[RMDB]
RNA sequence: GGGAACGACUCGAGUAGAGUCGAAAACAGCCUGGGACUGCCAGGAGCGCCGGGCGGGAAGCGGCCUGUGGCCGCCUGGCCUCUGACACGAGGCUGGCCGGGGAUGGCGCCCGAAGCUUUUCACCCACUUACUCAUAUUCUUCGGAAUAUGAGUAAGAAAAGAAACAACAACAACAAC
Reactivity to DMS in 0.01 (KOAc 150mM, MgCl2 10mM, bicine 150mM(pH8.5), 24C), signal-to-noise 2, nucleotides 027 to 126: c100a120g000c020c030u010g010g000g020a140c140u010g000c010c010a140g000g010a080g000c050g020c110c000g000g000g010c030g020g000g010a120a100g000c040g020g000c000c000u010g020u000g030g020c000c000g030c040c010u000g000g000c010c000u000c010u000g000a150c250a110c230g010a010g000g000c000u020g000g020c040c020g000g020g010g030a130u000g000g020c010g000c000c010c010g000a070a130g000c020u000u000u000u000c110a160c010c010c030a230
Reactivity to 2A3 in 0.01 (KOAc 150mM, MgCl2 10mM, bicine 150mM(pH8.5), 24C), signal-to-noise 3, nucleotides 027 to 126: c010a010g070c000c000u050g050g070g190a300c120u130g040c040c020a050g010g030a050g050c050g020c010c000g000g030g030c040g030g030g010a090a010g030c010g010g040c010c180u300g070u300g140g010c010c000g020c000c000u000g020g000c000c000u010c010u030g150a050c010a020c180g020a010g000g000c000u000g020g000c000c000g080g000g010g030a070u090g030g000c000g020c000c000c020g040a020a010g010c010u080u040u080u110c060a090c010c010c000a040
Chemical mapping of a 177-nucleotide RNA with DMS and 2A3. Reactivities are given for positions 27 through 126. It was measured as part of the RMDB library RFMREP. The reactions ran in a buffer of 150 mM KOAc, 10 mM MgCl2 and 150 mM bicine (pH 8.5), at 24 C. For DMS the reverse transcriptase was MarathonRT.